[RMDB]
RNA sequence: GGGAACGACUCGAGUAGAGUCGAAAAUUGGCACAGUACUAGUACUGUCCCAAGUGUGGACCGACUAGUUACGAGUUGGCCCAAACCGAUCACGAUUCUCGAUCAGAAGUGGAGUGCACUAGUCAGAGGUCCGCAUAAUAUUCGUAUUAUGCGGACCAAAAGAAACAACAACAACAAC
Reactivity to 2A3 in 0.01 (KOAc 150mM, MgCl2 10mM, bicine 150mM(pH8.5), 24C), signal-to-noise 2, nucleotides 027 to 126: u040u010g020g030c020a000c000a020g020u010a000c000u060a070g090u070a140c010u020g010u000c030c000c000a170a160g190u140g160u240g190g040a050c030c000g000a000c000u000a040g010u050u090a020c040g000a030g050u030u070g090g000c020c010c000a000a060a040c000c030g020a050u040c070a030c070g050a050u130u020c010u010c030g080a180u000c030a030g080a110a010g040u080g020g060a050g100u090g030c030a000c080u020a020g110u060c040a000g100a030
Reactivity to DMS in 0.01 (KOAc 150mM, MgCl2 10mM, bicine 150mM(pH8.5), 24C), signal-to-noise 2, nucleotides 027 to 126: u010u010g000g010c160a020c000a100g000u000a050c030u010a130g020u000a120c000u020g010u000c200c000c010a150a160g040u000g040u000g040g000a060c010c070g010a050c030u000a020g000u000u000a100c100g000a100g000u010u000g000g000c020c010c040a070a100a090c080c030g000a060u010c020a080c100g000a070u010u010c060u000c060g010a090u000c080a060g030a080a090g000u000g020g010a080g030u000g030c090a030c040u000a070g020u000c060a090g020a210